[RMDB]
RNA sequence: GGGAACGACUCGAGUAGAGUCGAAAACAAAGCUGCGUAAGUCUAACUCUUCGGAGCCGUCAAGCCUCACAAUGCUAACUAGUGGGGAUUUGGCGUAACUUUGUUAGCCGCUCUCUCGUCUCAUCCGAAGCGAGGGAAAAGAUUAGGAUUGCCCAUCGGAGAUGGGCCUGUUCGCAGGCCCAUCUCCAAAAGAAACAACAACAACAAC
Reactivity to 2A3 in 0.01 (KOAc 150mM, MgCl2 10mM, bicine 150mM(pH8.5), 24C), signal-to-noise 1, nucleotides 027 to 156: c010a030a140a020g100c070u160g020c000g080u100a020a020g020u010c040u080a080a110c050u060c030u260u150c050g000g000a000g040c040c010g020u000c000a040a000g020c010c010u060c000a000c020a040a090u150g060c060u150a040a200c020u010a040g020u000g000g000g000g010a070u010u000u000g000g000c000g000u020a000a020c010u000u070u140g020u020u020a010g000c020c000g040c010u000c000u010c000u010c020g250u020c020u000c020a230u140c110c070g040a030a010g000c000g000a000g020g020g090a000a200a000a000g030a060u120u260a040g000g000a030u060u130g020c000c000c000a060u110c040
This 207-nucleotide RNA was probed chemically with 2A3. The 2A3 profile rests on 461 reads. It was measured as part of the RMDB library RSTRND. The RNA was probed in 150 mM KOAc, 10 mM MgCl2 and 150 mM bicine (pH 8.5) at 24 C.